The record gives the reactivity of an RNA of 207 nucleotides to 2A3 and DMS. For DMS the reverse transcriptase was MarathonRT. 2A3 adducts were read by reverse transcription with SuperScript II with manganese.

RNA sequence: GGGAACGACUCGAGUAGAGUCGAAAAGAUAUGGAGCUGAACUACUCGGAGUAUGUGAGGCUAUGAAGUAAGCUCGGAAACGAGCUUAUGGAGCCUCAUGAAACGAGCAGCUCCUAAGUCAAAGAGUUGCGUUAUUGUUCGCAAUAACGCAACUCAACAUAUUGCGAACCUUCGGGUUCGCAAUAUGAAAAGAAACAACAACAACAAC
Reactivity to 2A3 in 0.01 (KOAc 150mM, MgCl2 10mM, bicine 150mM(pH8.5), 24C), signal-to-noise 3, nucleotides 027 to 156: g020a010u070a030u160g000g010a000g030c020u030g010a080a100c090u160a040c010u300c000g000g010a000g020u030a050u300g000u040g000a000g010g000c010u050a300u100g010a010a000g000u010a000a000g000c020u000c000g020g010a030a060a050c010g000a000g020c000u010u000a000u000g000g000a010g010c000c010u000c010a010u030g000a000a010a000c000g000a000g000c000a000g000c000u000c000c000u000a000a010g030u030c030a090a080a040g000a000g000u000u000g000c000g010u000u010a000u000u010g080u080u110c300g010c170a000a000u000a000a000c010g000c000a000a000c000u000c000a000a000
Reactivity to DMS in 0.01 (KOAc 150mM, MgCl2 10mM, bicine 150mM(pH8.5), 24C), signal-to-noise 1, nucleotides 027 to 156: g010a200u010a230u000g010g000a020g070c000u000g010a110a230c020u020a090c000u000c000g010g050a160g000u010a060u010g010u000g010a010g060g050c010u000a090u000g040a130a300g000u010a000a010g040c000u000c020g000g010a090a080a300c010g000a020g010c040u000u000a000u000g010g010a020g010c010c010u010c010a040u000g000a120a170a220c050g000a010g010c000a060g010c010u000c010c000u010a000a080g000u000c080a130a160a150g020a010g040u010u000g000c000g010u010u000a010u010u000g010u000u040c300g040c000a020a000u000a020a010c000g000c000a000a000c010u000c000a010a120